[RMDB]
RNA sequence: GGGAACGACUCGAGUAGAGUCGAAAACGCUGGGUAUUAUACUUCGCGGCACGGGAGCUGAAGCGCGCACGGCAUCGAUCGUGUCGCGAAGUAAUACCUGUGCUGAAGCGCGCACGGCAACCGAAAGGUGCGAAAGGGUGUGAGUUCGCUCACACCCGCACUCCACAAGCUUCGGCUUGUGGAGUGCAAAAGAAACAACAACAACAAC
Reactivity to 2A3 in 0.01 (KOAc 150mM, MgCl2 10mM, bicine 150mM(pH8.5), 24C), signal-to-noise 1, nucleotides 027 to 156: c090g020c010u080g040g000g010u020a000u080u110a130u100a120c010u010u000c000g000c010g030g000c000a000c030g060g040g000a010g000c000u040g040a290a020g010c000g000c000g040c040a030c030g020g000c130a180u300c130g090a070u100c020g010u040g000u000c010g000c030g000a000a000g000u000a000a000u000a000c000c000u000g000u000g000c010u080g040a140a020g020c010g010c000g000c000a020c040g030g040c010a040a020c010c000g070a120a010a020g000g010u050g000c030g100a090a050a100g000g000g020u000g010u000g000a000g010u050u150c240g050c160u000c000a000c020a000c000c000c000
The data come from the RNA Mapping Database (RMDB), library RNAMAK. Structure probing data (2A3) for a 207-nucleotide construct. For 2A3 the reverse transcriptase was SuperScript II with manganese. The 2A3 profile rests on 1,241 reads.